[RMDB]
RNA sequence: GGGAACGACUCGAGUAGAGUCGAAAAGAUAUGGAAUAGAAUCGUGAAACCACCUGAGCAACAGCGUGGCCAUCGGAAACGAUGGCACGACAUGCUUCGGUGGUUUCACGAUUCUAUUCCUAAGUCAGAAAGUUUUAAUGUUCGCAUUAAAACUUUCAAAAGAAACAACAACAACAAC
Reactivity to DMS in 0.01 (KOAc 150mM, MgCl2 10mM, bicine 150mM(pH8.5), 24C), signal-to-noise 2, nucleotides 027 to 126: g020a030u020a300u000g000g020a010a000u020a020g000a020a010u000c000g000u010g010a010a000a010c000c000a000c000c000u000g010a000g000c010a050a070c300a230g030c020g050u000g010g000c000c000a000u010c020g000g030a140a100a230c000g020a010u000g000g030c000a000c010g000a060c100a150u000g000c000u000u000c300g000g000u000g000g000u000u000u000c020a000c010g000a000u000u000c000u010a000u000u000c000c000u000a000a040g010u000c030a170
The record gives the reactivity of an RNA of 177 nucleotides to DMS.
The reactions ran in a buffer of 150 mM KOAc, 10 mM MgCl2 and 150 mM bicine (pH 8.5), at 24 C.
For DMS the reverse transcriptase was MarathonRT.